[RMDB]
RNA sequence: GGGAACGACUCGAGUAGAGUCGAAAAUACGUUCCGGGAGGAUCGAAUAACAUCAGAGAUUACCUUCACAAGAUUGUUUAUAAUGAAACGUUGCAGGAAUCGUACGUUAUCGAUUCGUAUGAUGGUACACUGAGGUGGGAUUCGUCCCACCUCAGUGAAAAGAAACAACAACAACAAC
Reactivity to 2A3 in 0.01 (KOAc 150mM, MgCl2 10mM, bicine 150mM(pH8.5), 24C), signal-to-noise 2, nucleotides 027 to 126: u070a040c010g000u000u000c020c000g000g210g080a000g000g090a060u000c000g000a020a140u060a000a000c010a040u110c030a080g100a030g000a120u000u090a300c000c000u090u070c040a020c000a040a030g040a140u030u100g100u060u170u120a300u040a260a300u150g100a000a000a000c070g130u100u060g030c060a050g000g000a030a020u000c000g030u010a130c120g020u000u060a040u050c000g010a050u000u000c000g030u040a090u030g200a110u000g050g060u030a020
Reactivity to DMS in 0.01 (KOAc 150mM, MgCl2 10mM, bicine 150mM(pH8.5), 24C), signal-to-noise 3, nucleotides 027 to 126: u080a090c110g000u000u000c010c010g010g020g010a300g010g010a000u010c030g000a030a030u020a000a030c030a090u020c170a120g010a100g000a010u000u000a110c000c000u000u000c030a000c110a120a060g020a100u010u030g010u000u000u000a060u060a100a060u020g010a060a060a030c100g010u010u020g010c180a050g030g000a020a010u000c000g000u020a130c160g090u000u020a010u000c010g010a010u010u010c010g010u060a090u030g020a080u010g000g000u000a190